[RMDB]
RNA sequence: GGGAACGACUCGAGUAGAGUCGAAAAUGCAAGUAGUGCUAUUGUUGGAAUCACCGUACCUAUUUAGGUUUACGUUCCAAGAUCGGUGGAUAGCAGCCCUAUCAAUAUCUAGGAGAACUGUGCUAUGAAAACGGUAUUGGCUUCGGCCAAUACCGAAGUCUAACCUUGUGUUCGCACAAGGUUAGACAAAAGAAACAACAACAACAAC
Reactivity to DMS in 0.01 (KOAc 150mM, MgCl2 10mM, bicine 150mM(pH8.5), 24C), signal-to-noise 1, nucleotides 027 to 156: u000g000c020a050a150g030u010a160g000u020g060c000u000a050u010u000g070u010u020g020g000a110a060u020c020a130c120c100g030u010a060c040c010u010a130u000u020u030a060g020g000u000u020u000a050c090g010u000u020c020c040a080a080g000a050u040c010g010g040u000g010g000a060u010a080g000c000a100g000c040c050c050u000a140u000c020a110a120u010a110u000c080u000a040g000g010a160g000a100a110c030u020g010u000g020c040u000a050u040g000a050a060a050a160c050g020g000u000a010u000u000g020g040c020u060u000c300g010g000c040c000a010a010u010a000c000c000g010a010a000
Reactivity to 2A3 in 0.01 (KOAc 150mM, MgCl2 10mM, bicine 150mM(pH8.5), 24C), signal-to-noise 3, nucleotides 027 to 156: u040g000c030a020a020g050u040a020g050u120g060c030u060a030u070u150g040u010u050g030g040a060a110u080c030a030c050c040g030u050a010c010c010u070a200u250u240u270a070g050g030u050u030u080a050c080g040u050u000c020c000a010a010g090a090u150c050g010g030u020g030g030a060u040a020g020c020a000g010c010c000c000u050a070u080c080a130a110u110a020u220c050u040a010g010g040a100g050a070a060c030u050g010u030g090c020u050a040u200g110a100a050a020a000c010g000g000u000a000u000u000g000g000c000u000u000c150g030g000c000c000a000a000u000a000c000c000g010a000a000